Structure probing data (DMS and 2A3) for a 207-nucleotide construct. The RNA was probed in 150 mM KOAc, 10 mM MgCl2 and 150 mM bicine (pH 8.5) at 24 C. 2A3 is a SHAPE reagent: it acylates the 2'-hydroxyl of flexible nucleotides of all four kinds. For DMS, 1,622 sequencing reads were counted.
[RMDB]
RNA sequence: GGGAACGACUCGAGUAGAGUCGAAAAGAGAUGGCGAGAGCCAUCGGUAGUAUAGCGAAAAUCAUAAAUGAGAAGAGCUCUAAACGCCUAAGUAGAGUUAAAAUAAUUAGACGGGCACUACUACAAACACGGCCUCGAACGUUCGCGUUCGAGGCAACAAUCUUAAGAGGUUCGCCUCUUAAGAUUGAAAAGAAACAACAACAACAAC
Reactivity to DMS in 0.01 (KOAc 150mM, MgCl2 10mM, bicine 150mM(pH8.5), 24C), signal-to-noise 1, nucleotides 027 to 156: g010a120g020a000u010g040g010c000g010a300g000a300g020c000c020a000u000c000g010g020u000a020g000u000a090u000a100g000c000g020a090a060a060a170u010c070a120u000a090a070a130u000g000a070g010a140a100g040a300g000c020u000c020u010a090a120a030c010g020c000c020u000a020a070g000u000a050g000a190g020u000u020a040a090a080a130u010a060a060u000u000a040g000a020c030g000g050g040c020a060c060u000a040c030u000a150c040a060a090a060c080a080c060g040g000c000c010u010c010g000a010a000c000g000u000u000c300g050c050g010u000u000c000g020a020g020g020c000a010a010
Reactivity to 2A3 in 0.01 (KOAc 150mM, MgCl2 10mM, bicine 150mM(pH8.5), 24C), signal-to-noise 2, nucleotides 027 to 156: g080a000g000a000u010g000g000c000g010a050g000a000g040c000c000a000u000c000g010g000u000a010g000u020a000u050a040g050c050g070a060a040a030a050u070c030a070u100a190a140a060u190g020a060g030a120a060g040a010g020c000u020c000u010a020a030a020c070g000c000c010u040a160a020g010u000a000g010a010g020u150u170a010a030a040a040u120a050a020u250u020a040g000a020c010g000g020g000c020a000c010u030a010c000u020a010c020a010a180a030c060a050c120g180g000c010c000u010c010g000a000a000c000g020u080u070c140g000c000g140u000u000c020g010a000g010g000c010a000a000